[RMDB]
RNA sequence: GGGAACGACUCGAGUAGAGUCGAAAAAUUUUAGGGUCUACUACUGGAGGACUAGUCUUAAGACAGUGGGACAAAAGUUCUUGUGAUUUUCUCCCCUUAAUCAAUAUGCACAUGUUGACUACCGAUGUGUAAGGCAGUCAAGAGAAGCAGAGAAGAAAAUAAUUACCAGGUUCGCCUGGUAAUUAUUAAAAGAAACAACAACAACAAC
Reactivity to 2A3 in 0.01 (KOAc 150mM, MgCl2 10mM, bicine 150mM(pH8.5), 24C), signal-to-noise 1, nucleotides 027 to 156: a000u110u250u210u130a100g020g030g020u030c080u080a010c000u000a050c090u110g100g010a020g020g000a010c040u000a010g020u010c040u060u040a120a000g100a040c060a080g050u100g000g060g020a000c000a010a150a000a000g000u000u070c010u040u080g070u020g100a160u020u050u050u060c070u030c000c000c000c000u050u110a050a050u100c010a010a160u090a020u230g000c000a000c000a060u080g010u140u100g130a080c100u010a000c060c000g070a070u060g060u010g070u130a010a020g050g000c010a000g010u010c020a010a000g010a000g050a080a000g000c080a000g030a000g010a130a000g030a000a170
Reactivity to DMS in 0.01 (KOAc 150mM, MgCl2 10mM, bicine 150mM(pH8.5), 24C), signal-to-noise 1, nucleotides 027 to 156: a080u000u000u000u000a050g040g010g000u010c000u000a080c010u010a090c060u000g010g000a090g000g030a100c010u000a140g000u000c030u000u000a080a180g000a070c100a080g010u000g000g000g010a100c040a030a050a100a190g010u000u010c060u010u000g010u000g010a130u000u000u000u010c060u010c020c010c010c110u000u010a040a090u010c060a060a120u000a140u000g020c020a070c070a200u000g000u010u020g040a060c020u000a010c010c000g000a090u000g040u000g020u000a110a230g010g030c020a040g000u000c000a020a110g010a050g010a140a190g010c050a030g000a060g010a060a170g000a040a110